[RMDB]
RNA sequence: GGGAACGACUCGAGUAGAGUCGAAAAGAUAUGGAGCUGAUGGAGCUGACGCUAUAUCGGAAACGAUAUAGAGUGGUUCAGCGUUGAAAUCAGCUCCUAAGUCAUGGGCGGCACUUCGGUGCCGCAACUUACUCGGAUAGUUCGCUAUCCGAGUAAGAAAAGAAACAACAACAACAAC
Reactivity to 2A3 in 0.01 (KOAc 150mM, MgCl2 10mM, bicine 150mM(pH8.5), 24C), signal-to-noise 4, nucleotides 027 to 126: g040a010u070a040u190g000g000a010g000c000u000g000a000u010g010g030a010g010c000u010g010a010c000g010c020u000a000u000a000u010c010g020g030a060a060a040c010g010a010u030a000u030a010g040a060g300u290g110g070u220u050c020a020g010c010g060u300u010g020a010a010a000u000c000a000g000c000u000c000c000u000a000a000g000u000c020a060u100g090g250g000c030g000g000c010a000c020u050u090c300g070g000u000g000c000c000g000c000a000a000
Reactivity to DMS in 0.01 (KOAc 150mM, MgCl2 10mM, bicine 150mM(pH8.5), 24C), signal-to-noise 4, nucleotides 027 to 126: g000a020u000a300u010g000g010a020g000c000u000g000a010u000g000g000a050g010c000u000g010a020c020g000c000u000a000u000a000u000c010g010g010a120a100a200c010g020a010u000a000u000a000g000a040g020u010g010g010u010u000c010a010g010c000g000u000u010g000a070a090a000u000c000a010g020c000u000c000c000u010a000a100g010u000c030a120u000g010g010g020c000g000g010c010a010c000u000u010c220g010g020u010g000c000c000g010c010a000a020